Conditions: 150 mM KOAc, 10 mM MgCl2 and 150 mM bicine (pH 8.5), 24 C. An RNA of 177 nucleotides, treated with DMS and 2A3 and read out base by base. DMS adducts were read by reverse transcription with MarathonRT. It was measured as part of the RMDB library TTRDEL. 2A3 adducts were read by reverse transcription with SuperScript II with manganese. Values cover nucleotides 27 to 126. For DMS, 1,269 sequencing reads were counted.

[RMDB]
RNA sequence: GGGAACGACUCGAGUAGAGUCGAAAAGAUAUGGAAUGCACAGGGAGCUCCUCGGAAACGAGUGAGCAUCGAUCUGUGACAUUCCUAAGUCAAAAGUAUGCAGACCAGUUCGCUGGUCUGCAUACAACGUAGGCCUAAGGUUCGCCUUAGGCCUACGAAAAGAAACAACAACAACAAC
Reactivity to DMS in 0.01 (KOAc 150mM, MgCl2 10mM, bicine 150mM(pH8.5), 24C), signal-to-noise 1, nucleotides 027 to 126: g000a040u000a300u000g000g010a020a010u000g000c000a010c000a010g000g020g000a050g020c010u000c000c000u020c000g030g000a100a110a160c010g000a030g010u020g010a010g020c000a080u090c120g000a040u010c000u010g000u000g000a150c000a000u000u000c000c010u020a020a100g000u000c030a070a090a080a070g000u000a000u000g000c000a020g020a010c000c000a010g030u000u010c270g000c000u010g000g010u000c000u000g010c000a000u000a000c000a050a050
Reactivity to 2A3 in 0.01 (KOAc 150mM, MgCl2 10mM, bicine 150mM(pH8.5), 24C), signal-to-noise 1, nucleotides 027 to 126: g030a000u050a070u160g000g010a040a000u000g060c000a010c000a000g180g030g020a030g000c000u000c020c020u000c010g030g060a060a060a050c000g000a000g040u300g050a000g030c000a030u010c030g070a090u000c010u000g020u030g080a000c000a000u000u000c000c000u000a050a000g020u020c010a000a040a000a110g010u000a000u010g000c000a000g000a000c000c010a000g000u030u180c270g170c190u000g070g040u020c000u000g010c000a000u000a000c000a010a010